Notes
This 177-nucleotide RNA was probed chemically with 2A3 and DMS. Conditions: 150 mM KOAc, 10 mM MgCl2 and 150 mM bicine (pH 8.5), 24 C. The data come from the RNA Mapping Database (RMDB), library OK1LIB. 2A3 adducts were read by reverse transcription with SuperScript II with manganese.
RNA sequence: GGGAACGACUCGAGUAGAGUCGAAAAGAAAUAAAUAGCUUCGAUACGUGAGCCGAAGAACGUGGGAAUGAGGAAACUCAGCGAUAAAAUUCGCUCAGAACGGCAGAAUUGAAGCUUAACCACGGAAGGGUUAACUUUAGUUCGCUAAAGUUAACCCAAAAGAAACAACAACAACAAC
Reactivity to 2A3 in 0.01 (KOAc 150mM, MgCl2 10mM, bicine 150mM(pH8.5), 24C), signal-to-noise 3, nucleotides 027 to 126: g060a020a090a030u200a060a080a020u170a050g000c000u010u010c020g000a000u010a080c030g140u170g140a030g010c040c020g010a060a050g030a080a080c030g030u050g000g090g100a070a260u150g020a070g040g060a030a030a040c000u020c030a000g000c000g040a000u080a130a220a000a030u100u000c000g040c000u060c010a080g080a160a020c030g030g000c030a020g060a130a030u010u050g000a010a000g000c000u000u030a010a020c000c010a000c050g070g030a130a090
Reactivity to DMS in 0.01 (KOAc 150mM, MgCl2 10mM, bicine 150mM(pH8.5), 24C), signal-to-noise 3, nucleotides 027 to 126: g010a060a020a060u010a060a180a130u020a080g010c020u020u010c010g010a040u020a130c140g010u020g000a110g000c000c020g030a110a100g000a110a120c090g030u000g010g010g040a110a090u030g020a050g000g010a130a060a300c010u000c030a070g010c070g000a160u010a030a060a100a150u000u000c000g010c000u010c070a080g000a100a050c040g000g030c020a110g020a120a050u010u000g000a000a030g000c020u000u000a080a110c000c010a040c080g010g000a100a160